[RMDB]
RNA sequence: GGGAACGACUCGAGUAGAGUCGAAAAGUCACUCAAUUCGUUGAGUGACAUACUGGGCCCGGAGUCGCGCAUGAAAGGGUCAAGACCCGCUCGAUAAAAUAACUAGUUGCCAGUUCGCUGGCAACAACAUAAUUUUUAUGUUCGCAUAAAAAUUAUGAAAAGAAACAACAACAACAAC
Reactivity to DMS in 0.01 (KOAc 150mM, MgCl2 10mM, bicine 150mM(pH8.5), 24C), signal-to-noise 3, nucleotides 027 to 126: g010u000c000a020c000u000c010a010a050u000u010c170g010u000u020g010a020g030u000g000a000c010a020u010a030c050u010g020g010g010c020c010c010g020g020a180g020u000c010g030c160g050c080a100u010g020a110a180a120g000g010g030u000c040a070a050g010a190c000c000c010g010c110u000c090g020a090u000a040a060a100a090u010a070a120c130u010a140g010u000u000g010c000c000a010g010u000u010c160g020c000u010g000g010c010a000a010c010a040a190
Reactivity to 2A3 in 0.01 (KOAc 150mM, MgCl2 10mM, bicine 150mM(pH8.5), 24C), signal-to-noise 3, nucleotides 027 to 126: g000u010c000a000c000u000c010a000a020u070u060c170g040u080u010g000a000g010u000g010a000c000a000u020a000c000u030g020g010g010c030c010c000g030g010a030g040u050c040g000c010g010c290a040u140g080a140a070a040g010g020g000u040c030a010a010g090a040c020c010c010g030c040u060c060g140a110u140a160a160a030a040u110a090a060c070u060a080g000u000u010g000c010c000a000g010u040u030c150g000c080u000g040g000c000a000a000c000a000a000
Chemical mapping of a 177-nucleotide RNA with DMS and 2A3. The DMS profile rests on 2,590 reads. For 2A3 the reverse transcriptase was SuperScript II with manganese. Conditions: 150 mM KOAc, 10 mM MgCl2 and 150 mM bicine (pH 8.5), 24 C.